[RMDB]
Chemical mapping of a 177-nucleotide RNA with DMS and 2A3. 2A3 adducts were read by reverse transcription with SuperScript II with manganese. For 2A3, 2,529 sequencing reads were counted. The DMS profile rests on 906 reads. The data come from the RNA Mapping Database (RMDB), library TTRDEL. Values cover nucleotides 27 to 126. DMS adducts were read by reverse transcription with MarathonRT.

RNA sequence: GGGAACGACUCGAGUAGAGUCGAAAAGAUAUGGAGUCGAAUUCGCUUGGAUUUACGACCACAUCGGAAACGAUGUGCAAGUUGUCAGCGAACGACUCCUAAGUCAAAACACGAGUUCGCUCGUGAACGGAGCUUAUCAGUUCGCUGAUAAGCUCCGAAAAGAAACAACAACAACAAC
Reactivity to DMS in 0.01 (KOAc 150mM, MgCl2 10mM, bicine 150mM(pH8.5), 24C), signal-to-noise 2, nucleotides 027 to 126: g010a010u000a300u000g000g000a010g000u000c000g000a120a170u010u000c010g000c000u000u000g020g050a010u000u000u010a010c000g000a300c300c000a000c000a010u000c000g000g000a090a100a220c000g010a030u000g000u000g000c010a010a300g000u000u010g020u000c000a070g010c010g010a010a030c020g000a050c000u010c000c000u000a010a020g010u000c030a070a190a100a120c000a010c010g000a020g000u000u040c170g000c000u000c000g040u040g000a080a100
Reactivity to 2A3 in 0.01 (KOAc 150mM, MgCl2 10mM, bicine 150mM(pH8.5), 24C), signal-to-noise 2, nucleotides 027 to 126: g030a000u060a000u150g000g000a010g030u030c040g060a160a300u080u020c010g000c080u140u180g250g010a150u300u250u200a010c020g000a030c000c000a000c000a010u020c000g050g000a000a050a050c010g000a020u000g000u030g030c020a010a020g010u010u020g060u110c070a030g000c000g000a000a000c000g000a000c000u000c000c000u000a000a010g020u000c010a010a010a110a020c030a010c000g000a020g020u120u110c150g040c130u000c010g000u040g000a000a000